An RNA of 170 nucleotides, treated with 2A3 and DMS and read out base by base. The RNA was probed in 150 mM KOAc, 10 mM MgCl2 and 150 mM bicine (pH 8.5) at 24 C. For DMS, 58,406 sequencing reads were counted. The data come from the RNA Mapping Database (RMDB), library 15KLIB. For DMS the reverse transcriptase was MarathonRT.

[RMDB]
RNA sequence: GGGAACGACUCGAGUAGAGUCGAAAACACUUAAACGACAGAUUCGCAUUGCAUGCCGUAAGUGUAAUUUAGCUUUCCGGUUAACCACCUCAAAGCUACGCGCUAAUGAUAAUAUCUUAUCAGUUAGAAACUGGUUAGUUCGCUAACCAGAAAAGAAACAACAACAACAAC
Reactivity to 2A3 in 0.01 (KOAc 150mM, MgCl2 10mM, bicine 150mM(pH8.5), 24C), signal-to-noise 9, nucleotides 027 to 129: c020a000c010u050u060a110a140a010c030g100a030c020a050g090a200u180u160c090g020c090a060u070u300g020c040a030u040g010c020c020g030u030a020a010g000u010g020u060a070a210u090u130u070a010g000c000u010u030u010c030c000g010g000u020u050a040a040c040c020a010c020c000u040c040a020a010a000g000c000u040a070c070g100c010g000c070u050a060a020u030g040a010u000a060a060u100a090u140c080u030u010a010u020c030a060g040u020u040a030g030a060a110a030
Reactivity to DMS in 0.01 (KOAc 150mM, MgCl2 10mM, bicine 150mM(pH8.5), 24C), signal-to-noise 9, nucleotides 027 to 129: c020a050c010u000u000a040a040a080c020g030a020c040a060g030a180u080u040c200g020c100a070u050u110g010c030a120u020g000c010c020g040u000a020a010g000u010g000u050a090a110u040u030u020a020g000c020u000u000u000c090c210g000g060u000u000a090a110c210c140a120c040c020u000c290a000a000a000g030c020u040a000c230g050c100g000c000u000a030a040u020g020a020u030a010a060u020a100u060c180u000u000a020u020c020a020g000u000u050a020g030a100a090a110